[RMDB]
RNA sequence: GGGAACGACUCGAGUAGAGUCGAAAACACUCUGGGACAAGCCCUUGAAACGGGGUCUAAAACUGGAUGGCUGCAUCGUAAGCAACAUGGAGGAACGAAUGCAGCGGAGGUGAAGGAAGAGCCCGCGAGUUUUAUUAAAAUUCGUUUUAAUAAAACUAAAAGAAACAACAACAACAAC
Reactivity to 2A3 in 0.01 (KOAc 150mM, MgCl2 10mM, bicine 150mM(pH8.5), 24C), signal-to-noise 7, nucleotides 027 to 126: c050a010c010u050c040u060g020g000g030a050c040a100a080g030c000c020c030u020u070g120a080a060a020c100g020g010g010g030u030c030u050a080a100a040a040c010u030g040g090a080u080g200g000c000u010g000c010a010u000c000g050u060a110a080g120c060a070a130c030a130u220g110g050a110g090g030a070a010c010g010a100a050u010g000c000a000g000c000g010g020a020g000g010u050g020a060a040g040g020a040a040g030a030g100c000c000c000g030c050g010
Reactivity to DMS in 0.01 (KOAc 150mM, MgCl2 10mM, bicine 150mM(pH8.5), 24C), signal-to-noise 8, nucleotides 027 to 126: c070a110c060u000c020u020g020g000g010a100c100a140a190g000c020c010c000u000u010g010a070a140a140c130g010g000g010g010u030c030u020a060a070a120a060c030u000g010g010a140u040g000g000c000u000g010c000a010u000c010g000u000a070a130g010c120a090a080c170a100u040g030g000a120g000g020a130a030c010g010a060a030u010g010c010a020g010c020g000g010a190g010g000u000g000a150a090g000g010a120a120g000a140g010c030c020c020g030c150g010

The record gives the reactivity of an RNA of 177 nucleotides to 2A3 and DMS. Source: RMDB library OK1LIB, as collected in RNAgym. The 2A3 profile rests on 7,049 reads. In probing experiments dimethyl sulfate is read out at A N1 and C N3, which are open when not base-paired.